Notes
Chemical mapping of a 207-nucleotide RNA with DMS and 2A3. Reactivities are given for positions 27 through 156. Conditions: 150 mM KOAc, 10 mM MgCl2 and 150 mM bicine (pH 8.5), 24 C. The 2A3 profile rests on 1,077 reads.
[RMDB]
RNA sequence: GGGAACGACUCGAGUAGAGUCGAAAAUGCUCUUAACGCAGUCCCUGGGGCCCUUUCCUGGGCCACAGCUUAUCAGCCUCCAAAGGCCAGGGGAUCAUCUUCUUGGCAUGUACCACUCUCAGAACAACCCACCUACUCCCCUGUCUACCAGAUUGCACGUGAUUAUUUACUUCGGUAAAUAAUCACGAAAAGAAACAACAACAACAAC
Reactivity to DMS in 0.01 (KOAc 150mM, MgCl2 10mM, bicine 150mM(pH8.5), 24C), signal-to-noise 1, nucleotides 027 to 156: u030g010c010u010c100u010u010a140a040c110g040c060a060g010u010c000c050c000u010g020g000g020g000c010c000c000u000u020u000c260c150u020g000g080g000c000c020a000c030a010g000c090u010u000a070u000c040a070g000c000c020u000c020c070a080a150a160g010g030c020c040a070g040g020g050g010a170u000c110a080u010c040u010u000c050u000u010g030g000c000a010u000g030u000a040c010c020a120c080u000c070u000c030a100g000a110a120c090a050a110c040c030c010a150c030c030u010a090c070u020c000c010c020c000u020g010u000c030u000a140c030c000a200g000a140u000u000g030c060a150
Reactivity to 2A3 in 0.01 (KOAc 150mM, MgCl2 10mM, bicine 150mM(pH8.5), 24C), signal-to-noise 2, nucleotides 027 to 156: u060g000c020u020c000u170u130a110a000c080g040c030a030g030u030c020c000c020u010g050g000g010g000c010c020c010u060u170u150c050c070u020g000g000g010c000c000a000c000a000g010c000u120u160a130u260c060a030g020c000c010u100c070c020a190a070a040g020g000c000c010a020g040g000g000g020a010u090c040a040u030c050u140u040c020u050u060g020g010c000a040u090g030u040a020c000c020a030c030u020c020u010c070a010g030a150a030c030a060a050c060c000c010a060c030c000u030a080c020u010c000c000c000c000u000g040u000c010u030a060c010c010a030g040a130u090u130g040c020a030